RNA sequence: GGGAACGACUCGAGUAGAGUCGAAAAGCCGGAGCCUCAAAUCUUUUGUACAUUCGAGGACUAUCCACAAUUAACCGCCAGCUGAGCAAGCUGAACCAAUGAACCUACCAAAAUUGGAAGUAGCCAGCAAACACACAAUCUUCGGAUUGUGUGUUUGAAAAGAAACAACAACAACAAC
Reactivity to DMS in 0.01 (KOAc 150mM, MgCl2 10mM, bicine 150mM(pH8.5), 24C), signal-to-noise 1, nucleotides 027 to 126: g000c100c100g000g030a100g000c010c010u000c010a010a030a060u000c020u000u040u000u010g030u010a110c110a030u000u000c030g020a050g000g010a040c130u000a100u000c030c000a040c110a100a150u000u000a080a290c100c070g030c160c040a030g010c000u000g010a070g010c120a050a030g000c030u000g000a070a070c020c020a040a040u020g010a060a150c100c040u020a160c100c060a060a070a100a110u010u000g020g000a070a040g020u020a070g030c010c020a070g020